[RMDB]
Source: RMDB library OK1LIB, as collected in RNAgym.
Structure probing data (DMS and 2A3) for a 177-nucleotide construct.
The DMS profile rests on 48,810 reads.
RNA sequence: GGGAACGACUCGAGUAGAGUCGAAAAGGCGAAUAUAGCGCAAUAAAAGGAUACCAUAAGCUACGACGCCGAAUGAGAAAUGAAGGCACUCGAAUGGUAAUACUCGCAAAGCUGCGACGAAGAGCCAAUAAUAAUUGUUAUUCGUAACAAUUAUUAUAAAAGAAACAACAACAACAAC
Reactivity to DMS in 0.01 (KOAc 150mM, MgCl2 10mM, bicine 150mM(pH8.5), 24C), signal-to-noise 9, nucleotides 027 to 126: g000g010c000g010a130a120u020a130u010a070g000c010g020c070a070a080u030a070a120a110a060g000g000a130u020a030c030c030a040u010a080a130g010c100u020a080c090g010a190c120g000c000c000g010a090a060u020g010a100g000a080a080a050u000g000a170a100g000g010c030a040c100u010c020g010a090a060u010g000g010u000a030a060u030a130c130u010c030g000c110a050a090a110g010c110u010g010c020g000a050c100g000a060a070g010a250g010c010c020a080
Reactivity to 2A3 in 0.01 (KOAc 150mM, MgCl2 10mM, bicine 150mM(pH8.5), 24C), signal-to-noise 7, nucleotides 027 to 126: g010g000c010g060a080a000u110a010u040a110g020c010g000c040a030a050u060a090a090a020a010g060g000a030u050a070c010c000a020u030a100a020g010c020u060a040c040g110a020c030g020c000c000g000a020a040u130g020a030g070a070a080a020u080g040a050a020g010g000c010a020c040u030c020g050a050a040u050g010g010u030a020a030u110a150c020u030c020g020c040a050a130a110g080c130u050g000c010g030a060c020g020a060a020g010a010g020c000c000a000
Source information
Values cover nucleotides 27 to 126. For DMS the reverse transcriptase was MarathonRT.